Notes: Structure probing data (DMS and 2A3) for a 177-nucleotide construct. DMS adducts were read by reverse transcription with MarathonRT. The reactions ran in a buffer of 150 mM KOAc, 10 mM MgCl2 and 150 mM bicine (pH 8.5), at 24 C. The DMS profile rests on 3,881 reads.
[RMDB]
RNA sequence: GGGAACGACUCGAGUAGAGUCGAAAAGCGUAUUACGCCGCAGCGCCGGUCCGGCUGGGAGGCGCAAAAGUACCGCACCUGAUGCCGGGUGACUCACUGAACCUGCAGACGGCUCAGGAUACGGAUAUCUAAGUAACCCUUUCGAGGGUUACUUAGAAAAAGAAACAACAACAACAAC
Reactivity to DMS in 0.01 (KOAc 150mM, MgCl2 10mM, bicine 150mM(pH8.5), 24C), signal-to-noise 4, nucleotides 027 to 126: g000c010g010u010a100u000u000a060c050g020c080c050g020c100a150g020c020g020c030c020g010g010u000c030c020g020g010c110u010g040g010g020a200g010g010c000g000c020a030a010a080a120g020u010a060c020c020g010c090a060c010c010u000g000a030u010g000c010c000g020g000g020u000g000a080c080u010c050a130c070u000g020a120a060c140c120u010g020c090a070g010a190c030g010g000c000u000c020a020g010g000a100u000a120c020g000g000a100u000a080
Reactivity to 2A3 in 0.01 (KOAc 150mM, MgCl2 10mM, bicine 150mM(pH8.5), 24C), signal-to-noise 2, nucleotides 027 to 126: g030c020g020u100a120u220u160a100c040g020c030c020g030c060a100g010c010g000c040c030g070g080u040c010c000g040g120c120u170g040g030g060a070g040g000c000g000c020a000a010a020a010g080u060a100c000c000g020c030a030c000c010u010g010a020u230g000c000c000g000g030g060u080g040a060c000u030c100a020c050u080g020a030a080c020c020u090g030c020a040g030a270c010g000g000c000u010c010a000g000g030a030u040a070c000g010g030a040u080a060